[RMDB]
RNA sequence: GGGAACGACUCGAGUAGAGUCGAAAAUUCAGUUAACCAAAUUGUCUUGCGUAAUUCUAAUGGUGCUUGCAUUUGGAACGCUGCUGCAUAUAUGAAACUCUCGGAUGCACUUAAACGACAGAUUCGCCUCUAAGCAAACGUUCGCGUUUGCUUAGAGAAAAGAAACAACAACAACAAC
Reactivity to DMS in 0.01 (KOAc 150mM, MgCl2 10mM, bicine 150mM(pH8.5), 24C), signal-to-noise 1, nucleotides 027 to 126: u020u000c040a090g000u010u000a110a270c020c000a030a030a040u000u000g010u010c020u020u000g010c010g030u010a080a040u000u010c170u000a120a070u010g020g020u010g010c030u000u000g010c000a080u000u000u010g020g000a090a120c220g010c030u010g000c140u040g000c000a030u010a050u000a050u010g000a090a080a100c070u000c090u000c030g000g000a040u010g020c040a030c090u000u010a030a040a120c070g000a080c060a030g010a120u000u000c020g020c120
Reactivity to 2A3 in 0.01 (KOAc 150mM, MgCl2 10mM, bicine 150mM(pH8.5), 24C), signal-to-noise 1, nucleotides 027 to 126: u020u000c010a000g000u010u060a080a030c000c000a000a040a030u070u050g070u090c010u000u070g010c010g010u090a100a110u210u080c020u090a130a110u150g080g010u070g020c010u000u000g000c010a060u030u000u050g000g030a010a010c080g010c000u010g010c010u000g070c100a040u090a000u040a050u240g030a050a110a100c020u000c010u020c000g070g030a010u070g050c010a040c040u050u140a070a050a070c010g090a030c010a030g060a100u030u100c060g000c070
An RNA of 177 nucleotides, treated with DMS and 2A3 and read out base by base.
It was measured as part of the RMDB library 15KREP.
The reactions ran in a buffer of 150 mM KOAc, 10 mM MgCl2 and 150 mM bicine (pH 8.5), at 24 C.
For DMS the reverse transcriptase was MarathonRT.
The DMS profile rests on 705 reads.
For 2A3 the reverse transcriptase was SuperScript II with manganese.